[RMDB]
RNA sequence: GGGAACGACUCGAGUAGAGUCGAAAAGUCGCUGGCCUUGUGGUUUUCUCUGAAUCACCCUAAGAGGCUUGUCUAAAGAUCACCCAUUCGUAUGACGCCGAAAGGGUGGGGAGGAAGGAUAGUGUACUGCACAGUUCUGUUUCGACAGAACUGUGCAAAAAGAAACAACAACAACAAC
Reactivity to DMS in 0.01 (KOAc 150mM, MgCl2 10mM, bicine 150mM(pH8.5), 24C), signal-to-noise 2, nucleotides 027 to 126: g060u000c030g010c010u000g010g010c000c020u000u000g030u040g010g020u000u000u000u030c030u000c020u000g000a200a150u000c020a020c010c060c020u000a030a110g010a300g000g000c010u010u010g020u000c020u000a120a130a220g000a010u000c180a170c040c060c030a190u040u000c060g000u000a270u000g000a030c040g080c040c010g000a080a020a010g000g000g010u000g000g000g000g000a100g000g010a110a060g010g000a060u000a030g000u010g000u010a070c090

Chemical mapping of a 177-nucleotide RNA with DMS. High DMS reactivity at an A or C suggests that its Watson-Crick edge is free.